[RMDB]
RNA sequence: GGGAACGACUCGAGUAGAGUCGAAAACAUGAAUGGUCGCCAUCUUAUACCGGGUGAUUGGGGCGGAGGAAGGUUCUUUACCAACCAGGUCUUUCUCCGGUAUAGGGAAGAGAGGUGGCCGUACUGACUGGGACUCUUGAUUCGUCAAGAGUUCCAGAAAAGAAACAACAACAACAAC
Reactivity to 2A3 in 0.01 (KOAc 150mM, MgCl2 10mM, bicine 150mM(pH8.5), 24C), signal-to-noise 9, nucleotides 027 to 126: c060a060u180g140a140a060u120g030g000u000c000g000c000c010a040u020c020u010u000a000u000a010c010c000g050g000g090u160g060a070u080u160g050g030g030g020c050g040g120a100g050g020a020a040g040g010u100u110c050u170u280u190a030c010c000a010a010c000c010a050g100g060u010c000u010u060u000c010u010c000c000g000g000u000a000u010a010g020g030g040a170a070g120a020g010a020g020g000u000g000g000c000c010g000u010a040c020u040g110a040
Reactivity to DMS in 0.01 (KOAc 150mM, MgCl2 10mM, bicine 150mM(pH8.5), 24C), signal-to-noise 5, nucleotides 027 to 126: c050a110u040g020a110a070u040g020g030u000c010g050c000c010a150u020c000u000u000a010u010a010c000c000g000g010g040u010g000a090u050u010g010g000g000g000c010g000g020a210g010g000a040a300g000g020u010u020c300u010u030u040a040c020c000a050a300c010c000a110g000g000u000c000u000u010u000c010u000c000c000g000g000u000a000u000a020g010g000g020a110a090g010a150g000a100g010g020u000g000g000c020c000g000u010a020c050u010g000a270
Notes:
Chemical mapping of a 177-nucleotide RNA with 2A3 and DMS. For 2A3, 16,006 sequencing reads were counted. Conditions: 150 mM KOAc, 10 mM MgCl2 and 150 mM bicine (pH 8.5), 24 C. For DMS, 10,177 sequencing reads were counted. DMS (dimethyl sulfate) methylates the pairing face of unpaired adenines and cytosines.